[RMDB]
RNA sequence: GGGAACGACUCGAGUAGAGUCGAAAAAAUAUGUUUGUUAAUUGACUGUCUUCCCUUCUGUGGGGUAUUUGACUCAAGGAAGGUAGGGCCUUUCUUGUGUUUGUUCAUUACUGUAUGCUGGAUGUCUAGAGGAGUGCCAGACACACAGGAGGUGUGCCACAAUACGGAUGUUCGCAUCCGUAUUGUGAAAAGAAACAACAACAACAAC
Reactivity to DMS in 0.01 (KOAc 150mM, MgCl2 10mM, bicine 150mM(pH8.5), 24C), signal-to-noise 1, nucleotides 027 to 156: a060a090u010a100u000g020u010u000u010g030u000u000a130a090u010u010g000a120c080u010g000u000c050u000u010c040c010c000u000u000c040u020g020u010g010g020g000g020u010a030u010u010u010g020a060c040u000c020a020a040g020g000a030a040g010g020u000a150g020g020g010c040c000u000u000u000c010u010u000g010u000g000u000u010u000g010u010u000c110a110u000u000a080c110u010g020u000a040u000g000c020u000g020g000a090u010g020u010c050u010a130g000a170g010g010a120g060u000g010c080c020a180g030a050c000a000c010a010c010a020g010g020a200g000g020u000g010u000g000c020
Reactivity to 2A3 in 0.01 (KOAc 150mM, MgCl2 10mM, bicine 150mM(pH8.5), 24C), signal-to-noise 6, nucleotides 027 to 156: a000a000u300a090u100g040u040u110u040g020u020u040a120a130u100u060g090a090c060u070g050u110c040u050u110c020c020c000u010u020c030u020g020u040g020g040g000g000u040a060u050u140u100g020a010c000u000c020a010a010g020g000a010a010g020g020u120a090g140g110g070c010c000u030u000u000c000u000u010g020u010g050u050u100u110g090u060u050c040a040u030u100a040c030u080g060u200a060u140g020c010u000g020g030a130u130g090u120c040u090a070g020a070g230g050a030g060u060g040c000c010a000g020a030c050a020c000a000c000a080g040g000a020g030g010u070g020u040g060c040